[RMDB]
RNA sequence: GGGAACGACUCGAGUAGAGUCGAAAAGAUAUGGAGCUGAUAGCACGUCAUGUAAGCUAGCUUUAAGGGUCGGAAACGACCCGGAGAGCUUGGACCUUACCGCUGACGUGCUAUCAGCUCCUAAGUCCACGACCUAUAACUUCGGUUAUAGGUCGUGAAAAGAAACAACAACAACAAC
Reactivity to DMS in 0.01 (KOAc 150mM, MgCl2 10mM, bicine 150mM(pH8.5), 24C), signal-to-noise 1, nucleotides 027 to 126: g020a100u020a300u010g010g010a010g020c010u000g000a000u000a000g020c000a010c000g020u000c020a000u000g000u010a010a010g000c060u000a020g010c030u000u000u010a300a300g000g010g010u000c010g020g000a210a130a300c000g040a020c010c000c000g000g000a300g000a000g010c000u010u010g030g030a150c300c000u000u010a040c000c000g010c000u000g010a010c010g040u010g020c000u000a000u000c000a020g000c010u010c000c000u010a000a010g000u000c090
An RNA of 177 nucleotides, treated with DMS and read out base by base.
The reactions ran in a buffer of 150 mM KOAc, 10 mM MgCl2 and 150 mM bicine (pH 8.5), at 24 C.
The data come from the RNA Mapping Database (RMDB), library TTRINS.
For DMS the reverse transcriptase was MarathonRT.